[RMDB]
RNA sequence: GGGAACGACUCGAGUAGAGUCGAAAACGUCCUAGUUUCGACUAGGACGAAAUAAUAUCAGCGGUAAAUAAUCGAGGCGUAUUACCGCUGAACGCCUCGAUAAAAUGCGAUGAUUCGUCAUCGCAAAGACUGGAUGUGGAUUCGUCCACAUCCAGUCAAAAGAAACAACAACAACAAC
Reactivity to DMS in 0.01 (KOAc 150mM, MgCl2 10mM, bicine 150mM(pH8.5), 24C), signal-to-noise 1, nucleotides 027 to 126: c040g000u020c000c000u000a030g010u000u000u020c220g020a090c000u000a010g020g000a000c000g000a000a040a050u010a070a090u020a100u010c010a060g000c010g000g000u020a150a110a110u000a060a070u000c070g000a030g010g000c000g000u000a110u000u000a150c030c010g020c020u000g000a020a050c000g000c000c000u000c020g000a060u010a070a080a080a090u000g010c000g020a030u010g000a030u000u040c270g020u000c010a000u010c020g030c020a010a020a050
Reactivity to 2A3 in 0.01 (KOAc 150mM, MgCl2 10mM, bicine 150mM(pH8.5), 24C), signal-to-noise 2, nucleotides 027 to 126: c000g020u020c000c020u000a010g010u030u060u030c210g070a020c000u000a040g000g040a000c010g000a000a000a000u170a030a050u070a050u070c020a000g020c000g000g110u110a090a130a130u170a140a070u100c040g030a020g020g000c000g000u010a070u040u090a060c010c010g000c000u000g000a000a000c000g010c010c000u000c000g000a000u090a060a110a000a050u080g010c000g000a000u000g010a010u020u080c140g050u030c030a000u010c010g000c020a000a000a010
This 177-nucleotide RNA was probed chemically with DMS and 2A3. 2A3 is a SHAPE reagent: it acylates the 2'-hydroxyl of flexible nucleotides of all four kinds. For 2A3 the reverse transcriptase was SuperScript II with manganese. Reactivities are given for positions 27 through 126. The data come from the RNA Mapping Database (RMDB), library M2PK50. The RNA was probed in 150 mM KOAc, 10 mM MgCl2 and 150 mM bicine (pH 8.5) at 24 C.